The data come from the RNA Mapping Database (RMDB), library OK3TST.
An RNA of 207 nucleotides, treated with DMS and 2A3 and read out base by base.
For 2A3, 2,336 sequencing reads were counted.
The reactions ran in a buffer of 150 mM KOAc, 10 mM MgCl2 and 150 mM bicine (pH 8.5), at 24 C.
The DMS profile rests on 3,255 reads.
RNA sequence: GGGAACGACUCGAGUAGAGUCGAAAAUACGAUUGCAGUAGUUGCACUGGAUAUUGCAGGCUGGUGCGACCGCGACGUGCAUGCGCAUGAAAUAGUAGUGCGCUUCUUCUGAAUAGCAGGAAAGCUCCUUGAUCUUCUCCCAGACAGCCGGCUCCACCAGUUACUACUCUUUCGAGAGUAGUAACUGAAAAGAAACAACAACAACAAC
Reactivity to DMS in 0.01 (KOAc 150mM, MgCl2 10mM, bicine 150mM(pH8.5), 24C), signal-to-noise 2, nucleotides 027 to 156: u000a080c050g030a130u000u010g020c040a120g040u000a090g010u000u000g030c000a050c000u010g020g020a130u000a090u000u010g000c150a110g020g000c000u000g000g060u010g010c040g000a050c050c060g010c030g000a040c090g000u010g000c110a090u000g010c050g000c030a040u010g000a100a100a180u000a190g040u010a190g020u010g000c000g000c030u020u000c050u010u010c020u010g000a060a070u000a110g000c040a090g000g010a080a120a090g010c020u000c020c030u000u000g010a100u010c040u000u000c060u010c020c010c010a150g020a050c040a090g040c010c030g030g010c020u000c010c010a110c180
Reactivity to 2A3 in 0.01 (KOAc 150mM, MgCl2 10mM, bicine 150mM(pH8.5), 24C), signal-to-noise 4, nucleotides 027 to 156: u110a020c040g180a200u010u100g000c040a030g020u180a020g000u030u020g020c010a000c020u010g010g010a040u070a070u160u290g060c080a060g140g070c020u010g000g000u020g010c010g010a000c030c030g020c010g020a040c030g020u050g030c040a060u110g010c010g020c010a030u060g130a110a160a040u200a070g080u010a010g010u020g020c010g000c010u040u040c020u060u010c000u020g080a150a070u060a110g040c040a010g000g050a050a030a010g010c010u030c010c010u060u060g050a130u080c010u110u000c020u040c010c000c000a020g000a110c010a000g040c010c000g030g000c000u020c020c000a050c000